[RMDB]
Source: RMDB libraries RFM100 and RFMREP, as collected in RNAgym. The record gives the reactivity of an RNA of 177 nucleotides to DMS and 2A3. The 2A3 profile rests on 2,039 reads. Conditions: 150 mM KOAc, 10 mM MgCl2 and 150 mM bicine (pH 8.5), 24 C.

RNA sequence: GGGAACGACUCGAGUAGAGUCGAAAAAUACAAAAUUAAUCGUGCGGAUUAAUAAUCCAGGACUAUAAAACCGUGUUGUUUAUAUCGAGUCUCUUUUGGUAUAAGCGUCAAGUCCAUCGGAGAGAUCCUUAGGACUGCUAUUCGUAGCAGUCCUAAGAAAAGAAACAACAACAACAAC
Reactivity to DMS in 0.01 (KOAc 150mM, MgCl2 10mM, bicine 150mM(pH8.5), 24C), signal-to-noise 2, nucleotides 027 to 126: a100u050a120c110a120a080a090a060u000u000a020a020u020c030g000u020g010c200g020g020a020u000u000a040a010u030a090a170u010c000c070a090g000g000a020c030u000a100u030a060a060a100a060c110c130g040u020g010u000u030g020u000u000u000a030u000a030u000c030g000a070g010u020c040u010c060u000u010u010u010g010g000u010a040u000a000a020g000c000g040u010c070a110a050g000u000c000c010a110u000c100g010g000a020g040a130g000a050u010c080
Reactivity to 2A3 in 0.01 (KOAc 150mM, MgCl2 10mM, bicine 150mM(pH8.5), 24C), signal-to-noise 4, nucleotides 027 to 126: a000u190a030c120a050a120a030a050u080u090a050a020u050c060g020u110g190c080g110g030a010u000u020a050a020u100a070a000u020c000c010a010g000g020a030c020u090a040u080a300a040a050a060c080c040g030u030g040u090u050g000u000u060u000a030u000a010u020c050g010a010g150u010c020u020c010u160u050u040u100g030g010u010a020u010a080a070g020c040g070u040c040a010a030g030u000c000c020a050u050c040g000g010a010g000a010g000a050u050c000